[RMDB]
RNA sequence: GGGAACGACUCGAGUAGAGUCGAAAAAGAUGGCCUUCAUGUUCUAGAAUUAUACCUCGCAACAAUACACCGAUUUUAGGCGUGGUAUAAAGGUGUAUUGUUCACUAGUCAUGUUUGGCGAUCUAAAGGGAACGGCCUGCUUCGGCAGGUUGUUCCCAAAAGAAACAACAACAACAAC
Reactivity to 2A3 in 0.01 (KOAc 150mM, MgCl2 10mM, bicine 150mM(pH8.5), 24C), signal-to-noise 8, nucleotides 027 to 126: a000g010a010u050g130g000c010c010u000u000c010a010u010g040u110u070c000u020a040g060a210a170u300u110a140u200a300c050c090u160c090g050c080a010a000c000a010a010u000a000c010a000c000c020g150a190u040u050u050u160a090g090g020c060g040u070g070g030u120a060u100a070a040a000g000g000u000g010u000a000u000u010g010u000u000c020a030c000u010a010g020u010c000a000u000g110u060u020u060g010g000c010g000a000u000c000u000a040a050a040
Reactivity to DMS in 0.01 (KOAc 150mM, MgCl2 10mM, bicine 150mM(pH8.5), 24C), signal-to-noise 1, nucleotides 027 to 126: a020g000a020u000g000g000c000c000u000u000c000a000u000g000u000u040c000u000a000g000a140a080u020u050a190u010a110c170c050u000c110g020c150a050a050c000a000a010u000a050c000a000c010c030g000a210u040u000u000u000a020g010g010c070g030u020g000g000u000a100u010a000a090a140g000g000u000g000u000a000u000u000g000u000u000c000a260c000u000a000g000u000c030a010u000g000u010u000u000g030g010c000g000a000u020c010u000a110a060a080
Conditions: 150 mM KOAc, 10 mM MgCl2 and 150 mM bicine (pH 8.5), 24 C. Structure probing data (2A3 and DMS) for a 177-nucleotide construct. 2A3 adducts were read by reverse transcription with SuperScript II with manganese. For 2A3, 7,416 sequencing reads were counted.